[RMDB]
Structure probing data (2A3 and DMS) for a 177-nucleotide construct. Conditions: 150 mM KOAc, 10 mM MgCl2 and 150 mM bicine (pH 8.5), 24 C. For 2A3 the reverse transcriptase was SuperScript II with manganese.
RNA sequence: GGGAACGACUCGAGUAGAGUCGAAAACUACCACAAACCUAGAUGCUUAAAACUACACACAUUUACUAUCUUAACAGUUCUGGGCUGGGUAUGGUAGCUCAUGCCUGUCAUCUGAACACUUUGGGAGUGGACGAGUAGGAUUCGUCCUACUCGUCCAAAAAGAAACAACAACAACAAC
Reactivity to 2A3 in 0.01 (KOAc 150mM, MgCl2 10mM, bicine 150mM(pH8.5), 24C), signal-to-noise 4, nucleotides 027 to 126: c050u060a050c000c020a030c040a080a150a080c010c020u060a070g010a120u100g030c050u170u090a000a210a090a010c040u110a030c020a020c010a010c030a160u020u190u050a130c100u130a130u160c070u140u160a100a080c050a060g010u010u000c000u010g000g000g000c000u030g020g000g030u020a010u020g110g010u080a020g020c050u090c030a000u050g000c010c000u000g050u090c000a060u030c070u070g010a040a020c010a030c080u100u050u050g120g000g030a120g020
Reactivity to DMS in 0.01 (KOAc 150mM, MgCl2 10mM, bicine 150mM(pH8.5), 24C), signal-to-noise 1, nucleotides 027 to 126: c190u000a040c010c010a010c220a010a140a030c020c040u000a010g000a010u000g000c030u010u000a000a090a010a190c100u000a090c060a110c090a160c190a060u070u000u000a000c090u000a020u020c000u000u000a110a150c260a030g000u000u000c140u000g000g030g030c060u000g000g000g000u010a060u000g010g000u000a110g000c160u090c040a060u000g000c000c000u000g000u110c000a000u080c050u020g060a080a010c050a080c080u000u000u040g000g020g000a020g010